Annotation
Chemical mapping of a 177-nucleotide RNA with DMS and 2A3. The data come from the RNA Mapping Database (RMDB), library TTRDES. The RNA was probed in 150 mM KOAc, 10 mM MgCl2 and 150 mM bicine (pH 8.5) at 24 C.
[RMDB]
RNA sequence: GGGAACGACUCGAGUAGAGUCGAAAAGAUAUGGAUCCGAAGAGCGACGAUCUACUGGGUCGGAAACGACCUGUAGGGAGCUCUAAGGAUCCUAAGUCAAACCACAGGCAGUUCGCUGCCUGUGGAACACUACACCUCGGUUCGCCGAGGUGUAGUGAAAAGAAACAACAACAACAAC
Reactivity to DMS in 0.01 (KOAc 150mM, MgCl2 10mM, bicine 150mM(pH8.5), 24C), signal-to-noise 2, nucleotides 027 to 126: g000a010u000a060u010g000g000a030u000c010c000g000a300a100g000a040g020c000g000a060c300g000a040u010c000u000a000c010u000g000g020g020u000c000g020g010a000a010a030c020g010a000c000c010u000g010u010a000g000g010g010a000g010c000u010c000u020a090a300g010g000a010u000c000c000u010a020a090g000u000c000a160a220a290c010c000a000c000a010g000g000c000a020g000u000u000c270g040c000u000g010c010c000u000g020u010g000g000a030a050
Reactivity to 2A3 in 0.01 (KOAc 150mM, MgCl2 10mM, bicine 150mM(pH8.5), 24C), signal-to-noise 2, nucleotides 027 to 126: g000a010u010a000u070g000g010a000u000c020c010g010a120a070g020a010g000c000g300a300c020g000a030u000c000u010a000c050u150g000g020g000u010c000g000g000a010a010a010c000g020a010c030c010u020g000u000a000g020g000g000a020g010c000u020c000u000a000a000g010g010a000u000c000c010u000a000a000g000u000c020a040a050a150c000c000a000c000a020g000g030c010a010g000u040u140c270g190c210u020g010c000c020u000g000u010g000g000a000a020